The record gives the reactivity of an RNA of 177 nucleotides to 2A3 and DMS.
The reactions ran in a buffer of 150 mM KOAc, 10 mM MgCl2 and 150 mM bicine (pH 8.5), at 24 C.
The 2A3 profile rests on 2,269 reads.
For DMS, 3,890 sequencing reads were counted.
RNA sequence: GGGAACGACUCGAGUAGAGUCGAAAAGCCGAGCUCCAGUCCGGCUGCCGCAGCACGCGCCUGGGCGCGGCGCAGCAGCUCGGGCGUCAGGUCGCUGGCAGUGACGUGGGCACCUGCCAUGGCUGCCCGUCAUGCCAAGGUUCGCCUUGGCAUGACGAAAAGAAACAACAACAACAAC
Reactivity to 2A3 in 0.01 (KOAc 150mM, MgCl2 10mM, bicine 150mM(pH8.5), 24C), signal-to-noise 2, nucleotides 027 to 126: g040c030c030g000a020g040c030u020c030c040a020g010u010c000c000g000g000c010u010g010c000c000g000c070a100g000c040a140c240g030c010g070c000c040u300g190g120g040c020g060c000g000g030c010g000c010a000g000c030a000g000c000u190c080g030g010g000c000g030u030c020a030g020g030u080c070g020c040u050g010g030c000a000g040u040g060a040c110g090u210g060g140g000c030a030c080c080u090g070c050c030a050u110g000g000c040u000g020c010c000
Reactivity to DMS in 0.01 (KOAc 150mM, MgCl2 10mM, bicine 150mM(pH8.5), 24C), signal-to-noise 2, nucleotides 027 to 126: g000c020c010g020a090g020c040u010c030c050a280g010u000c010c010g010g010c000u000g000c010c020g010c010a100g020c020a100c020g020c010g010c010c050u010g020g000g020c000g050c000g020g000c010g000c010a040g010c020a020g010c000u010c020g020g000g010c000g000u020c140a090g000g010u000c110g010c060u000g010g010c000a050g010u000g010a070c060g020u010g000g000g020c030a100c040c030u010g000c040c070a120u010g000g030c090u000g010c000c000